[RMDB]
RNA sequence: GGGAACGACUCGAGUAGAGUCGAAAAAUGAGUUGCACUAAUCAGUUGGGGCGUUUGAUGCAGUGGCAUCGAUGCCCCGAUCCGACCCGACCUGAGGACACACUGUGUGCACAGGGGCCAUCUGACUGUUUACAAUCUACUUCGGUAGAUUGUAAACAAAAGAAACAACAACAACAAC
Reactivity to 2A3 in 0.01 (KOAc 150mM, MgCl2 10mM, bicine 150mM(pH8.5), 24C), signal-to-noise 1, nucleotides 027 to 126: a000u120g040a010g160u140u070g080c030a070c060u130a170a100u200c040a040g020u060u090g000g000g000g000c110g000u020u090u300g010a010u000g040c000a090g250u070g300g000c000a010u010c000g010a010u010g000c000c150c000c000g000a000u010c000c020g040a000c050c000c020g150a160c010c040u070g080a090g150g060a040c030a010c010a020c180u200g040u020g020u030g100c060a000c010a030g000g010g110g080c070c010a130u070c000u040g070a090c000u010
Reactivity to DMS in 0.01 (KOAc 150mM, MgCl2 10mM, bicine 150mM(pH8.5), 24C), signal-to-noise 2, nucleotides 027 to 126: a110u020g000a060g020u000u000g010c060a110c070u000a150a090u000c060a090g020u000u000g010g010g020g010c000g010u000u000u030g040a010u000g010c020a300g030u030g040g010c000a000u000c010g000a010u010g000c010c000c000c000g000a020u000c060c040g000a170c010c030c040g000a130c090c030u010g030a180g000g000a040c100a070c100a090c140u000g000u020g040u000g010c050a060c040a070g000g010g010g040c140c110a070u000c040u000g010a190c140u000